Overview
This 207-nucleotide RNA was probed chemically with 2A3 and DMS. DMS (dimethyl sulfate) methylates the pairing face of unpaired adenines and cytosines. DMS adducts were read by reverse transcription with MarathonRT.
RNA sequence: GGGAACGACUCGAGUAGAGUCGAAAAUAUUCCGGUGUGGGAUACUUGGUAAUAUGUAACGCUAAUUGCAUAAGAUUGUAGGACGUAAUUUACAGUCUUGGUUUUUAUAAACCUGAAACUAAGUAAGAAUAGUAAGAGCGGUUCGCCGCUCUUACAACAUUCGUUCAGACUUCGGUCUGAACGAAUGAAAAGAAACAACAACAACAAC
Reactivity to 2A3 in 0.01 (KOAc 150mM, MgCl2 10mM, bicine 150mM(pH8.5), 24C), signal-to-noise 2, nucleotides 027 to 156: u140a060u020u060c000c000g080g040u050g030u090g040g120g030a020u040a030c010u010u030g020g000u030a010a030u030a010u030g020u010a020a020c030g030c300u140a140a090u160u090g000c000a030u020a040a000g010a030u000u010g000u010a010g000g110a030c070g040u030a010a100u060u050u030a000c000a010g010u000c000u000u040g030g010u040u040u000u040u060a210u190a030a030a000c000c000u000g030a040a000a040c010u030a030a000g040u020a030a050g040a170a100u110a130g020u020a000a000g000a000g000c000g010g010u010u030c030g000c030c000g000c000u000c000u000u000a000c000a000a000
Reactivity to DMS in 0.01 (KOAc 150mM, MgCl2 10mM, bicine 150mM(pH8.5), 24C), signal-to-noise 1, nucleotides 027 to 156: u020a080u030u000c010c000g000g010u000g020u000g000g040g000a270u000a030c000u000u040g020g000u000a040a070u000a060u000g020u000a030a040c050g000c150u020a100a100u010u000g040c010a010u010a020a040g010a030u000u000g020u000a040g020g030a130c180g060u030a110a170u000u000u000a040c030a010g000u000c020u000u000g010g000u000u010u000u010u010a080u010a100a020a020c000c000u000g000a040a060a060c000u000a010a080g000u000a020a120g040a070a160u010a140g010u000a010a010g000a030g020c000g030g010u010u010c300g040c050c000g030c000u000c000u010u000a000c000a040a210
For 2A3 the reverse transcriptase was SuperScript II with manganese. Reactivities are given for positions 27 through 156. For DMS, 2,598 sequencing reads were counted.